[RMDB]
RNA sequence: GGGAACGACUCGAGUAGAGUCGAAAAAGUAAGCAACGAACUGCAAUUUGCCGACAAGCAAUUUUUUUAUCGUUGGACUGUUGGCACCACAGUUAAUUUUCAUAUGAGGUACUUACAAUUUAUGAUACGCUGAUGACGCAUUCGUGCGUCAUCAGCGAAAAGAAACAACAACAACAAC
Reactivity to 2A3 in 0.01 (KOAc 150mM, MgCl2 10mM, bicine 150mM(pH8.5), 24C), signal-to-noise 1, nucleotides 027 to 126: a000g090u100a020a000g000c140a070a040c070g020a000a000c000u000g020c000a040a120u000u000u100g000c000c000g040a000c000a000a000g000c000a000a000u080u000u000u000u000u060u230a160u050c010g030u120u000g000g000a000c000u000g000u000u000g000g030c000a000c020c030a010c030a000g000u050u120a050a250u050u040u100u140c000a000u010a030u120g070a010g140g060u010a000c000u040u000a000c030a070a140u170u100u000a090u180g180a080u030a140
Structure probing data (2A3) for a 177-nucleotide construct. For 2A3 the reverse transcriptase was SuperScript II with manganese. Values cover nucleotides 27 to 126. As a SHAPE reagent, 2A3 marks flexible, mostly unpaired nucleotides at the ribose 2'-OH. The data come from the RNA Mapping Database (RMDB), library OK1LIB.